[RMDB]
RNA sequence: GGGAACGACUCGAGUAGAGUCGAAAACAGUCUAACAAUCGAGUCGACGUGCCCUGGUAACAAAUCGAUCCUGCGGGCAGUCCAGGGCGAGAUGUGAGAAGUCCGUCUUGUACCUGGUACGGCAAUGGUAGGCGAGGGUGCUUAACGCUAACCCGUCCCGCUAUAUGUGGUUCGCCACAUAUAGCGGAAAAGAAACAACAACAACAAC
Reactivity to 2A3 in 0.01 (KOAc 150mM, MgCl2 10mM, bicine 150mM(pH8.5), 24C), signal-to-noise 1, nucleotides 027 to 156: c000a040g130u000c000u040a010a030c010a010a170u010c020g020a020g000u000c000g040a100c030g050u050g000c000c000c000u000g060g020u080a050a020c050a040a010a100u120c070g060a120u100c000c010u020g000c040g080g010g020c000a000g020u030c000c000a000g000g000g010c000g010a010g000a000u090g090u300g030a020g000a120a100g160u040c020c030g000u000c000u010u000g020u070a300c000c000u030g000g010u040a000c000g020g000c050a090a040u060g260g000u000a030g000g020c030g000a090g030g050g000u050g010c050u050u160a090a020c030g090c040u070a050a110c000c030c010g040u100c000